[RMDB]
The record gives the reactivity of an RNA of 207 nucleotides to 2A3. 2A3 adducts were read by reverse transcription with SuperScript II with manganese. For 2A3, 1,028 sequencing reads were counted. The reactions ran in a buffer of 150 mM KOAc, 10 mM MgCl2 and 150 mM bicine (pH 8.5), at 24 C.
RNA sequence: GGGAACGACUCGAGUAGAGUCGAAAAUAGCGAAGUAGGAUUUUAUGCGUCAAGUGUUCACAGGCUGGGUAGUCGCCGUGAAACGAAAAGCAGAAAGCGUGCUGCUUACGAUAUAAUUUCCGCACCCAUAAGAAGUCUCUGUUCGCAGAGACUUCAACAGACACGCUAUGUUCGCAUAGCGUGUCUGAAAAGAAACAACAACAACAAC
Reactivity to 2A3 in 0.01 (KOAc 150mM, MgCl2 10mM, bicine 150mM(pH8.5), 24C), signal-to-noise 2, nucleotides 027 to 156: u130a000g060c030g050a060a030g040u110a090g090g030a030u000u000u000u020a030u010g010c000g000u020c090a040a090g010u090g060u300u000c010a010c040a050g020g040c030u120g130g030g040u110a100g150u190c070g000c000c010g010u030g000a000a010a000c010g000a000a040a000a040g000c000a000g060a080a150a020g290c190g140u190g010c010u000g020c000u000u000a010c010g010a010u000a000u000a120a010u000u000u000c000c000g010c010a020c000c020c000a060u120a080a100g000a000a000g010u000c000u000c000u000g060u030u090c260g000c120a000g010a000g000a000c000u000u000c000a000a010